[RMDB]
RNA sequence: GGGAACGACUCGAGUAGAGUCGAAAAGACACCAUUCCAGCGGACCACUGUGAUCCAAGAGGCAUUCAGCCAUCAUGAUGUGGCCUUUACCUCCACUCCUGUCUUGUUCUACACAGAUUCAGCACAGCAUUCGAAAAAUGUUCGCAUUUUUCGAAUGAAAAGAAACAACAACAACAAC
Reactivity to 2A3 in 0.01 (KOAc 150mM, MgCl2 10mM, bicine 150mM(pH8.5), 24C), signal-to-noise 5, nucleotides 027 to 126: g040a010c030a020c060c010a020u080u040c010c020a030g030c050g030g030a060c000c020a050c090u070g020u060g050a080u010c020c000a050a030g040a040g070g000c030a030u110u120c050a090g010c010c010a060u050c020a030u140g100a080u130g020u030g040g030c000c000u030u060u050a070c010c000u000c000c020a030c010u000c010c000u030g010u030c000u040u080g050u060u000c020u100a080c050a000c010a040g060a120u090u070c030a010g040c050a020c010a060g040
Reactivity to DMS in 0.01 (KOAc 150mM, MgCl2 10mM, bicine 150mM(pH8.5), 24C), signal-to-noise 5, nucleotides 027 to 126: g000a090c070a070c050c030a120u010u000c040c060a100g020c130g000g010a070c030c040a100c100u000g020u000g010a120u000c050c060a100a120g010a080g000g010c050a080u000u010c160a120g010c030c020a040u000c070a110u000g010a070u010g020u000g010g000c050c040u000u000u000a090c070c020u000c010c050a070c040u000c030c020u000g000u000c010u000u010g000u000u000c040u010a090c080a060c120a050g010a100u010u000c050a050g010c060a080c140a110g000